[RMDB]
RNA sequence: GGGAACGACUCGAGUAGAGUCGAAAAGAUAUGGACUCCGCACGGGAGAAUCUCGGAAACGAGAUGUCAUCGAUCGUGGGAGUCCUAAGUCAAAACUGCGUUUCCUUGUUCGCAAGGAAACGCAGAACCGCACAUACUAGUUCGCUAGUAUGUGCGGAAAAGAAACAACAACAACAAC
Reactivity to 2A3 in 0.01 (KOAc 150mM, MgCl2 10mM, bicine 150mM(pH8.5), 24C), signal-to-noise 1, nucleotides 027 to 126: g010a030u070a040u090g020g000a040c000u090c010c000g190c210a010c040g040g060g010a030g000a080a010u010c010u020c000g020g020a030a080a020c030g000a000g010a030u100g250u100c050a200u130c010g170a070u070c020g010u020g040g000g000a000g000u000c000c000u000a010a000g030u000c000a010a020a080a130c020u000g040c000g000u010u010u040c040c000u030u050g020u090u200c300g000c220a060a000g000g000a010a010a000c000g030c000a000g000a000a010
Conditions: 150 mM KOAc, 10 mM MgCl2 and 150 mM bicine (pH 8.5), 24 C. An RNA of 177 nucleotides, treated with 2A3 and read out base by base. Values are in units of 0.01, from 0 to 300, in steps of 10. Reactivities are given for positions 27 through 126.